[RMDB]
RNA sequence: GGGAACGACUCGAGUAGAGUCGAAAAGACAUCUGCUGCAUACCGCUACUAUAUUGAUGAUGUUUUCCAUGCCCUUGUACGGGAGAUACGUAGGAAAGAAAAGGAGGCAGUACUGGCCAUGGAGAAAAAAUCUAAGCCCAAAAACAGUGUAUGGAAGUACAUCGUUACAAUUCGUUGUAACGAUGUAAAAAGAAACAACAACAACAAC
Reactivity to DMS in 0.01 (KOAc 150mM, MgCl2 10mM, bicine 150mM(pH8.5), 24C), signal-to-noise 3, nucleotides 027 to 156: g010a100c020a070u000c010u000g030c030u010g020c030a190u000a080c050c000g000c040u000a090c030u000a110u010a120u010u000g000a150u000g000a110u000g010u000u010u000u000c000c010a100u000g020c050c020c020u000u010g020u000a040c040g020g000g030a140g010a110u000a040c030g030u010a110g020g000a060a090a150g000a070a070a070a090g030g010a100g020g030c000a090g030u000a040c050u000g000g020c030c020a060u010g020g010a060g000a000a000a050a070a100a100u010c050u000a090a130g040c020c010c060a020a060a060a070a070c040a070g020u000g010u000a060u000g040g000a090a110g000
Reactivity to 2A3 in 0.01 (KOAc 150mM, MgCl2 10mM, bicine 150mM(pH8.5), 24C), signal-to-noise 6, nucleotides 027 to 156: g060a000c010a060u010c020u050g020c010u040g020c030a050u050a100c050c000g050c050u060a050c040u050a060u090a110u300u140g060a090u050g010a020u030g060u050u070u010u000c010c000a010u050g020c000c020c000u040u140g040u060a040c050g010g110g010a040g020a060u140a040c060g050u080a060g030g070a080a060a050g060a030a100a030a010g040g020a030g020g010c030a010g020u040a040c050u050g030g000c010c020a020u040g020g020a040g020a030a080a030a010a000a000u010c020u030a030a050g030c000c000c030a040a080a020a030a010c060a020g040u040g020u070a040u070g030g000a030a020g020
The record gives the reactivity of an RNA of 207 nucleotides to DMS and 2A3. For DMS, 5,774 sequencing reads were counted. It was measured as part of the RMDB library OK3TST. The RNA was probed in 150 mM KOAc, 10 mM MgCl2 and 150 mM bicine (pH 8.5) at 24 C.